Conditions: 150 mM KOAc, 10 mM MgCl2 and 150 mM bicine (pH 8.5), 24 C. An RNA of 177 nucleotides, treated with DMS and 2A3 and read out base by base.
RNA sequence: GGGAACGACUCGAGUAGAGUCGAAAAGAUAUGGAUUUCUGUGAUGGAGCUAGACUAUUUAUUACUAUAUCGGAAACGAUAUAGUAAUAAACGAAUCUAGAACUACUCUGCAUGGAAUCCUAAGUCACAUACUUUUAUGGUUCGCCAUAAAAGUAUGAAAAGAAACAACAACAACAAC
Reactivity to DMS in 0.01 (KOAc 150mM, MgCl2 10mM, bicine 150mM(pH8.5), 24C), signal-to-noise 5, nucleotides 027 to 126: g020a050u000a300u020g000g010a010u000u010u000c000u000g020u010g010a130u010g000g010a010g000c000u000a010g000a040c040u010a290u000u000u000a010u000u000a010c000u000a000u000a000u000c000g010g000a140a080a210c010g010a010u000a000u000a000g000u000a010a000u000a010a000a030c120g000a070a130u000c000u000a000g010a070a040c060u010a300c050u000c000u000g020c010a010u000g010g000a020a030u000c000c000u010a040a080g010u000c030a300
Reactivity to 2A3 in 0.01 (KOAc 150mM, MgCl2 10mM, bicine 150mM(pH8.5), 24C), signal-to-noise 4, nucleotides 027 to 126: g030a020u100a040u150g020g020a020u090u300u020c040u050g090u060g180a300u230g030g040a010g020c020u010a010g010a010c040u040a080u280u070u000a000u030u000a010c000u000a000u000a010u020c000g000g040a080a090a040c020g000a000u000a000u000a010g000u000a000a000u000a000a000a000c020g090a080a140u000c010u010a010g000a000a010c010u030a060c010u000c020u030g030c030a020u060g000g020a020a010u030c000c000u010a120a030g050u040c020a010
DMS adducts were read by reverse transcription with MarathonRT.